[RMDB]
RNA sequence: GGGAACGACUCGAGUAGAGUCGAAAAGAUAUGGAUAACUCAGCUCGUCUGUGAAGUCGGAAACGAUGGAGACGGCUGAGGUUAUCCUAAGUCAAAACCACGAUACGCGUUCGCGCGUAUCGUGGAAGAGAUAAAGACAGUUCGCUGUCUUUAUCUCAAAAGAAACAACAACAACAAC
Reactivity to 2A3 in 0.01 (KOAc 150mM, MgCl2 10mM, bicine 150mM(pH8.5), 24C), signal-to-noise 7, nucleotides 027 to 126: g020a010u060a040u170g000g010a000u000a010a020c000u010c020a000g020c070u300c300g020u020c040u040g300u040g210a020a000g020u010c010g030g000a060a080a070c020g010a010u030g020g010a030g000a020c000g000g020c000u010g000a010g010g000u000u000a000u010c000c000u010a120a000g050u020c030a020a010a080a140c000c000a000c000g000a010u000a000c010g030c000g030u050u160c300g010c000g000c010g160u000a000u000c010g000u000g000g000a000a030
Reactivity to DMS in 0.01 (KOAc 150mM, MgCl2 10mM, bicine 150mM(pH8.5), 24C), signal-to-noise 5, nucleotides 027 to 126: g010a040u000a300u000g010g000a000u000a010a020c000u000c000a010g000c010u010c030g030u010c000u000g010u020g000a130a230g010u010c000g000g010a150a110a180c010g010a020u010g000g000a000g000a010c000g000g010c000u000g000a010g010g000u010u000a000u000c000c000u000a020a100g010u000c030a100a060a100a200c010c010a010c000g010a010u000a000c000g000c000g020u000u010c250g010c020g020c000g010u000a000u000c000g030u000g000g000a010a030